[RMDB]
RNA sequence: GGGAACGACUCGAGUAGAGUCGAAAACUUAUCCGGUUUUAACGCUGUUUUAUUGGCGCAAAGGUUUACGGAUAAACAACUAAUAAUUAAACCUUUUGUGUGCGGAACGUGGUUGUUUAACGUACUCACUGCCCCCAGGGAUUCGUCCCUGGGGGAACUAAGUACUUAGUUUCGACUAAGUACUUAGAAAAGAAACAACAACAACAAC
Reactivity to 2A3 in 0.01 (KOAc 150mM, MgCl2 10mM, bicine 150mM(pH8.5), 24C), signal-to-noise 4, nucleotides 027 to 156: c020u020u010a010u010c010c000g020g020u010u010u010u040a070a030c020g000c010u030g150u140u210u110u210a150u180u290g040g000c020g010c040a030a010a010g000g000u000u000u000a000c000g020g000a010u060a050a100a020c050a060a010c030u180a070a150u150a200a030u200u130a020a010a010c010c000u020u060u120u120g090u010g000u010g020c060g030g040a120a040c020g010u050g030g000u090u010g010u040u050u060a030a010c010g000u010a030c010u020c060a060c040u070g020c010c000c000c010c000a000g010g010g010a000u040u070c120g030u010c040c000c010u000g000g000g000g000g000a000a000
Reactivity to DMS in 0.01 (KOAc 150mM, MgCl2 10mM, bicine 150mM(pH8.5), 24C), signal-to-noise 1, nucleotides 027 to 156: c080u000u020a010u000c010c000g040g030u010u020u040u020a250a080c030g030c000u000g010u010u000u000u000a160u020u010g010g000c000g020c030a030a080a030g090g000u000u000u010a110c000g000g000a040u010a020a040a120c110a070a170c070u000a070a120u010a100a120u010u010a020a050a050c010c030u000u000u000u010g000u000g000u000g050c040g010g000a090a070c100g010u020g000g000u000u000g010u010u000u000a070a090c020g020u000a080c050u000c050a090c060u000g000c060c000c020c000c000a020g000g030g000a080u000u000c280g010u000c000c000c010u000g010g020g010g010g010a000a010